[RMDB]
RNA sequence: GGGAACGACUCGAGUAGAGUCGAAAAUAACGUACUUUCGAGUACGUUAAGUCUCCCGGCGCUAGCAGGGCUGAAGAGAAGAUGGAGGUGCUGGUGGUGGAAUUAGGGGGGGAUUCGUCCCCCCCAAAUUCCUUUGGAAGUUCGCUUCCAAAGGAAUAAAAGAAACAACAACAACAAC
Reactivity to DMS in 0.01 (KOAc 150mM, MgCl2 10mM, bicine 150mM(pH8.5), 24C), signal-to-noise 6, nucleotides 027 to 126: u000a000a000c000g010u000a000c000u000u000u010c160g010a030g020u000a000c000g000u000u000a010a060g010u010c110u000c010c010c020g020g020c070g020c070u000a070g030c080a080g000g010g010c050u010g010a110a080g000a110g000a060a080g000a080u010g000g010a100g010g010u000g010c070u000g000g020u010g000g010u000g010g000a070a080u010u010a090g010g010g020g020g010g010g000a020u000u010c140g010u010c000c000c000c000c000c000c000a000a020
An RNA of 177 nucleotides, treated with DMS and read out base by base. Reactivities are given for positions 27 through 126. The reactions ran in a buffer of 150 mM KOAc, 10 mM MgCl2 and 150 mM bicine (pH 8.5), at 24 C.